[RMDB]
RNA sequence: GGGAACGACUCGAGUAGAGUCGAAAAGCGUACUACUUUCGCGACGAUCGUAUAUUAGUCAGUAGGAACUACUCCCAAAUAGGAGCCUACUGAAUUUAUACGGGAGCGAAAGUAUCGCAAAUGGCACGUCUCGCUGUUCGCAGCGAGACGUGCCAAACAAGGGAUAUUAGUUCGCUAAUAUCCCUUGAAAAGAAACAACAACAACAAC
Reactivity to 2A3 in 0.01 (KOAc 150mM, MgCl2 10mM, bicine 150mM(pH8.5), 24C), signal-to-noise 1, nucleotides 027 to 156: g020c010g030u100a150c080u000a000c000u030u000u000c000g020c020g170a280c010g030a080u000c000g030u000a020u000a000u080u140a090g120u000c000a000g000u000a020g010g030a040a010c080u210a070c030u250c000c020c030a180a170a010u160a100g000g000a030g010c010c000u000a000c000u000g000a000a010u000u010u000a010u010a010c010g000g010g000a000g010c000g000a020a000a000g000u000a000u060c000g000c010a020a080a070u040g000g030c000a000c010g040u050c000u020c000g000c140u000g090u080u090c280g000c110a000g000c000g000a010g030a010c000g020u000g000c000c020a000a000a010